[RMDB]
RNA sequence: GGGAACGACUCGAGUAGAGUCGAAAACUAGUCGGGUAUGCCACCGAAAUUGCCCCCGGGGCAGUGGACCCGGCCGGGCUGCGGGCGCAACUAGCCCAGCGAUUGCCCGGUUACCUGGUGCCAGCCGGUAGUGUCGUUGUUUCGACAACGACACUACAAAAGAAACAACAACAACAAC
Reactivity to 2A3 in 0.01 (KOAc 150mM, MgCl2 10mM, bicine 150mM(pH8.5), 24C), signal-to-noise 3, nucleotides 027 to 126: c040u020a020g060u060c020g000g000g000u070a070u130g030c020c030a130c060c000g100a110a120a070u150u190g050c020c000c000c040c010g110g000g000g000c050a030g010u070g030g050a000c010c010c000g010g000c000c000g000g030g000c040u070g020c010g000g020g000c010g050c140a110a220c090u160a090g010c030c000c020a110g040c010g100a160u110u200g000c000c000c000g000g020u000u040a020c010c010u030g010g000u030g160c030c010a020g130c050c070g050
Reactivity to DMS in 0.01 (KOAc 150mM, MgCl2 10mM, bicine 150mM(pH8.5), 24C), signal-to-noise 2, nucleotides 027 to 126: c060u000a070g000u000c000g010g000g000u010a030u010g000c100c010a150c010c090g030a010a050a130u000u000g000c130c020c010c140c000g050g000g000g010c040a070g000u030g000g000a130c010c010c000g000g010c030c000g050g000g000c000u070g050c020g000g000g030c000g050c250a070a140c270u060a150g000c000c000c000a020g010c020g000a160u070u040g000c000c000c000g000g000u010u010a060c200c010u000g000g000u000g020c070c080a080g020c070c130g000
This 177-nucleotide RNA was probed chemically with 2A3 and DMS. The DMS profile rests on 1,735 reads. It was measured as part of the RMDB library OK1LIB. The 2A3 profile rests on 1,761 reads. The reactions ran in a buffer of 150 mM KOAc, 10 mM MgCl2 and 150 mM bicine (pH 8.5), at 24 C.